[RMDB]
RNA sequence: GGGAACGACUCGAGUAGAGUCGAAAAUGCGCGGCACGAAGACGGGAUAGAGAAGAUUGUGCUUGCUCAUCAUCGCGUCCGCUUCUUCCGCGGUCGGCACGUCGGCGUAUACGAGAUCCCCGAUCUCGUCCAACGUCGGAUUCGUCCGACGUUGGACAAAAGAAACAACAACAACAAC
Reactivity to 2A3 in 0.01 (KOAc 150mM, MgCl2 10mM, bicine 150mM(pH8.5), 24C), signal-to-noise 8, nucleotides 027 to 126: u110g010c050g000c000g010g010c040a010c110g050a070a020g060a050c050g030g060g020a050u180a120g080a030g050a140a080g020a050u080u250g060u110g100c020u060u170g050c030u030c020a090u020c010a030u060c040g020c020g110u020c000c000g010c000u040u010c020u080u020c020c020g150c010g070g010u030c000g030g000c050a020c070g040u030c020g040g000c020g020u080a040u040a110c050g000a010g010a070u040c040c030c010c020g020a030u040c040u030c080
Reactivity to DMS in 0.01 (KOAc 150mM, MgCl2 10mM, bicine 150mM(pH8.5), 24C), signal-to-noise 2, nucleotides 027 to 126: u010g020c080g000c030g000g000c140a050c120g020a070a020g000a030c040g020g000g000a050u000a060g000a060g000a070a100g000a090u000u030g030u010g010c000u020u000g020c020u000c070a070u000c020a060u030c000g000c100g000u000c020c060g010c050u010u010c050u000u010c040c080g010c030g000g010u000c060g000g000c120a080c080g010u010c000g000g030c000g010u010a110u020a040c040g000a050g010a050u010c030c020c000c090g000a110u010c020u010c020